[RMDB]
RNA sequence: GGGAACGACUCGAGUAGAGUCGAAAAACGCGGAGUACGCUCCGCGACAACACUUCUUUCGACCCGCUAACCGAAACCUAUGGGUCGUUAAAUUACGUCUCUAUCUUACUCACAUAACAUCGCACAAAAAACGUGGUUCGGUUCGCCGAACCACGAAUCGCAUAGUAGACUUCGGUCUACUAUGCGAAAAAGAAACAACAACAACAAC
Reactivity to 2A3 in 0.01 (KOAc 150mM, MgCl2 10mM, bicine 150mM(pH8.5), 24C), signal-to-noise 1, nucleotides 027 to 156: a000c040g010c010g000g020a010g000u000a010c170g030c030u000c010c000g080c000g050a000c000a060a030c030a000c010u120u060c020u080u140u010c040g000a020c000c000c010g050c130u000a040a070c130c060g130a140a000a130c000c080u060a160u300g000g000g000u000c000g000u020u090a000a060a130u130u140a000c030g050u030c000u000c000u080a080u090c010u030u060a030c000u070c040a030c010a150u120a070a060c030a070u100c090g060c160a030c060a070a090a020a110a160a080c040g010u000g020g000u000u000c000g000g000u040u080c170g050c000c000g000a000a000c000c000a000c000g010a000a000